[RMDB]
RNA sequence: GGGAACGACUCGAGUAGAGUCGAAAAGUGACACUAGGUGAGAUUCGUGGUGUUUAGUGUUGGGUAGGGUGAUAUAUAAGGAGUAUAUCGAUAUUCAAUACUUAUAUAUCUUUCUCACUCUCAUGAGCUAUUAUAAUUUCUUCGGAAAUUAUAAUAGAAAAGAAACAACAACAACAAC
Reactivity to 2A3 in 0.01 (KOAc 150mM, MgCl2 10mM, bicine 150mM(pH8.5), 24C), signal-to-noise 3, nucleotides 027 to 126: g060u040g030a010c010a010c030u020a020g040g000u020g020a040g010a050u040u050c020g020u070g010g000u000g000u010u030u050a010g000u010g010u020u040g000g000g010u010a020g010g020g060u060g010a000u000a000u000a000u000a030a030g100g010a040g040u020a020u000a010u050c030g000a020u010a010u010u050c000a030a030u030a080c000u030u000a010u000a000u000a000u020c010u000u040u000c000u000c010a010c000u030c000u020c010a040u050g010a000g000
Reactivity to DMS in 0.01 (KOAc 150mM, MgCl2 10mM, bicine 150mM(pH8.5), 24C), signal-to-noise 5, nucleotides 027 to 126: g000u020g000a070c060a060c040u010a070g000g010u010g010a090g010a100u030u020c080g030u000g000g020u000g010u010u010u020a040g020u000g010u010u000g020g000g000u000a070g020g000g010u020g000a000u000a000u010a000u000a020a060g000g010a090g030u000a020u010a130u060c130g000a070u010a010u000u000c010a050a160u020a300c000u000u010a010u000a010u000a010u010c010u010u020u010c010u000c040a010c020u000c030u000c070a050u020g000a100g000
The record gives the reactivity of an RNA of 177 nucleotides to 2A3 and DMS. The reactions ran in a buffer of 150 mM KOAc, 10 mM MgCl2 and 150 mM bicine (pH 8.5), at 24 C. For DMS, 11,556 sequencing reads were counted.